[RMDB]
RNA sequence: GGGAACGACUCGAGUAGAGUCGAAAAGACGAACGAAAACACAAAUGUUCCACGGUGCAGAAGCGUCCCUCACAUGAGGAUCACCCAUGUAACUCGGACAGGAUAUGCUUUUGGGAAAAAGAGAGAAACGAUUAGUAAACUUCGGUUUACUAAUCGUAAAAGAAACAACAACAACAAC
Reactivity to 2A3 in 0.01 (KOAc 150mM, MgCl2 10mM, bicine 150mM(pH8.5), 24C), signal-to-noise 5, nucleotides 027 to 126: g060a020c070g020a090a020c030g070a050a020a080a010c100a000c030a050a110a090u140g030u110u000c030c000a050c060g060g010u070g000c020a000g020a110a020g030c010g040u010c020c020c000u030c010a090c020a090u180g010a080g070g000a050u120c040a120c040c000c000a020u050g020u040a080a040c010u010c070g010g010a000c020a020g080g000a110u080a040u220g020c000u010u030u060u060g070g020g040a060a090a010a030a000g090a010g000a000g030a030a160
Reactivity to DMS in 0.01 (KOAc 150mM, MgCl2 10mM, bicine 150mM(pH8.5), 24C), signal-to-noise 6, nucleotides 027 to 126: g010a090c080g010a080a120c070g010a060a050a060a060c060a060c090a040a130a090u010g000u000u000c010c030a070c140g000g000u010g000c020a040g010a090a140g000c050g010u000c060c010c030u010c050a060c110a060u000g000a040g010g000a100u010c140a080c020c020c020a070u010g000u000a040a090c070u000c140g000g000a050c080a030g000g000a080u010a060u010g010c020u000u010u000u000g020g000g000a040a040a050a060a070g000a100g010a070g000a090a100